[RMDB]
RNA sequence: GGGAACGACUCGAGUAGAGUCGAAAACGCUGGGAGUUCGAUGAAUAGCUACCCACCGAAAUGACCCGGUUCUCCUGAAGCGCGCACGGGAGAACCGCAUUUCGAGGCUAUUCGCGAACUCCUGUGCUGAAGCGCGCACGGCAACCGAAAGGUGCGACGCAGUCUAUAAGUUCGCUUAUAGACUGCGAAAAGAAACAACAACAACAAC
Reactivity to DMS in 0.01 (KOAc 150mM, MgCl2 10mM, bicine 150mM(pH8.5), 24C), signal-to-noise 3, nucleotides 027 to 156: c070g040c080u010g030g020g000a070g030u000u000c010g000a050u030g020a020a040u000a030g000c010u010a080c020c020c050a300c050c000g000a020a030a020u000g000a180c120c200c300g010g000u010u000c000u000c010c000u020g000a020a070g020c050g010c020g000c030a300c030g010g000g010a010g000a030a020c000c000g000c000a020u000u000u000c020g000a170g020g000c010u000a020u000u010c000g000c010g010a010a040c010u000c000c020u010g010u000g010c010u000g000a020a090g010c010g000c010g040c020a300c030g000g050c000a140a140c030c030g010a080a090a200g020g020u000g000c010g000a230
Reactivity to 2A3 in 0.01 (KOAc 150mM, MgCl2 10mM, bicine 150mM(pH8.5), 24C), signal-to-noise 5, nucleotides 027 to 156: c050g000c030u070g010g010g010a020g010u010u010c050g090a300u110g000a030a000u000a000g000c000u040a060c060c070c080a030c010c010g010a000a000a010u050g040a090c090c140c050g000g000u000u010c000u010c000c000u050g060a280a080g000c010g000c010g000c010a010c010g000g010g000a000g000a000a000c000c000g000c000a000u000u000u000c000g000a010g000g020c000u000a000u000u000c000g010c000g010a000a000c000u000c000c000u010g000u020g000c010u080g030a120a030g000c000g000c000g000c000a010c010g050g000c040a110a120c020c020g050a050a030a030g030g010u090g030c020g040a000